[RMDB]
RNA sequence: GGGAACGACUCGAGUAGAGUCGAAAAACUGAUGACAUAAUGAACUUCUUAAAGAGCGUCAAGAAGGGGGAAGCUCCGAACGAGAUUGUGAAAAUAAUUAGCUACAACACGGAUGACCUCACGAAGAGUAAAUUAAUGAGUUCGCUCAUUAAUUUACAAAAGAAACAACAACAACAAC
Reactivity to 2A3 in 0.01 (KOAc 150mM, MgCl2 10mM, bicine 150mM(pH8.5), 24C), signal-to-noise 3, nucleotides 027 to 126: a000c050u060g030a060u100g040a090c050a080u200a110a030u150g010a060a090c020u060u050c010u080u100a080a120a010g030a020g010c030g040u010c040a060a070g080a030a120g090g000g010g000g000a010a010g030c020u020c030c010g060a050a030c040g000a010g060a200u080u070g030u030g090a070a070a010a020u190a060a060u140u090a050g040c020u040a020c010a060a000c010a030c030g030g000a020u070g050a030c020c000u000c010a030c060g040a040a050g090a010
Reactivity to DMS in 0.01 (KOAc 150mM, MgCl2 10mM, bicine 150mM(pH8.5), 24C), signal-to-noise 4, nucleotides 027 to 126: a110c070u000g010a080u000g020a090c060a070u010a100a070u010g010a100a110c060u010u000c030u010u010a080a090a100g000a070g030c080g010u000c050a040a080g030a120a100g020g000g000g000g000a060a110g000c100u000c030c020g010a050a110c090g010a120g010a090u000u000g020u000g010a070a060a100a040u010a000a060u000u000a080g010c110u000a040c060a020a030c070a090c040g000g000a080u010g000a100c040c010u000c080a060c160g010a050a070g030a210
Chemical mapping of a 177-nucleotide RNA with 2A3 and DMS. DMS adducts were read by reverse transcription with MarathonRT. The RNA was probed in 150 mM KOAc, 10 mM MgCl2 and 150 mM bicine (pH 8.5) at 24 C. Source: RMDB library OK2TST, as collected in RNAgym. 2A3 adducts were read by reverse transcription with SuperScript II with manganese.